RNA sequence: GGGAACGACUCGAGUAGAGUCGAAAAAUGAUACGCAGUGCUAACUGGCAGACAACAAGCCGCAGAGCAUAAAUUCAACCAUGAAUUUUUUGCGCUAUUAAAGGCUUUAAAAGUAUCAAAUCUUCUACGAAGAUCUGUGGCCAGCGGAGGAUAAUCACAAUAUCAUAUUUUUCGAAAUAUGAUAUUGAAAAGAAACAACAACAACAAC
Reactivity to 2A3 in 0.01 (KOAc 150mM, MgCl2 10mM, bicine 150mM(pH8.5), 24C), signal-to-noise 3, nucleotides 027 to 156: a000u050g000a020u030a040c050g000c090a030g040u020g110c030u060a120a180c000u050g020g010c000a040g040a090c020a090a000c010a040a030g000c020c000g060c060a000g020a020g020c000a010u000a000a020a000u010u000c020a060a130c100c090a240u160g030a020a010u020u020u030u030u070u080g010c010g010c010u010a010u020u130a200a110a050g000g000c000u040u050u090a060a110a040a050g020u020a020u140c000a000a020a120u010c020u060u000c030u130a100c150g010a010a020g000a030u000c020u070g060u080g050g020c000c020a020g000c050g030g060a030g030g010a080u130a100a050u180c060a030
Reactivity to DMS in 0.01 (KOAc 150mM, MgCl2 10mM, bicine 150mM(pH8.5), 24C), signal-to-noise 3, nucleotides 027 to 156: a100u000g020a110u000a050c020g010c070a130g030u000g040c020u000a160a060c020u000g000g020c010a170g020a150c080a110a130c130a060a050g020c000c010g020c210a040g000a050g000c000a020u000a010a010a030u000u010c020a070a230c300c210a220u000g010a030a010u000u000u000u010u000u000g030c000g010c020u000a120u000u000a050a090a170g000g010c000u000u000u000a040a060a080a170g010u000a070u010c020a050a060a060u000c000u000u010c010u010a100c140g020a080a070g010a030u000c040u000g030u000g030g020c010c020a040g010c030g010g010a070g010g000a120u000a030a130u000c030a160
The record gives the reactivity of an RNA of 207 nucleotides to 2A3 and DMS. The RNA was probed in 150 mM KOAc, 10 mM MgCl2 and 150 mM bicine (pH 8.5) at 24 C. It was measured as part of the RMDB library OK3TST. High DMS reactivity at an A or C suggests that its Watson-Crick edge is free.